[RMDB]
RNA sequence: GGGAACGACUCGAGUAGAGUCGAAAAAUAACUCACUACCCAGCUCUUAAGAUGGUUCAAACACAUCUUAGCCACUAUGUUCUUAACAUAGAUUGGUUGUGGUUUGCAUUUGAGACUGGUUUGGCAUUACCUAAGAUGUUCGCAUCUUAGAAAAGAAACAACAACAACAAC
Reactivity to DMS in 0.01 (KOAc 150mM, MgCl2 10mM, bicine 150mM(pH8.5), 24C), signal-to-noise 9, nucleotides 027 to 129: a110u030a020a040c020u000c050a160c100u020a100c210c010c000a010g030c090u010c030u000u020a050a040g000a030u000g020g030u070u040c080a020a030a030c050a000c000a080u030c160u030u050a040g010c000c030a060c010u010a020u000g010u000u000c220u050u080a040a030c020a030u020a030g030a130u030u010g020g020u020u010g010u030g000g030u000u020u000g020c010a040u000u020u010g000a010g010a070c000u000g020g150u010u000u020g010g010c110a070u050u040a070c150
Reactivity to 2A3 in 0.01 (KOAc 150mM, MgCl2 10mM, bicine 150mM(pH8.5), 24C), signal-to-noise 9, nucleotides 027 to 129: a000u090a040a030c020u020c050a040c030u060a040c020c000c000a010g020c070u000c000u040u040a080a030g040a100u040g070g050u220u220c030a030a020a000c060a010c010a200u070c060u180u120a020g010c000c000a000c010u000a000u000g020u060u070c170u240u290a050a000c000a010u020a030g060a160u050u120g010g000u030u070g020u030g030g080u020u020u030g010c010a020u010u020u030g010a010g010a030c000u000g000g000u040u040u100g060g010c070a070u050u140a080c010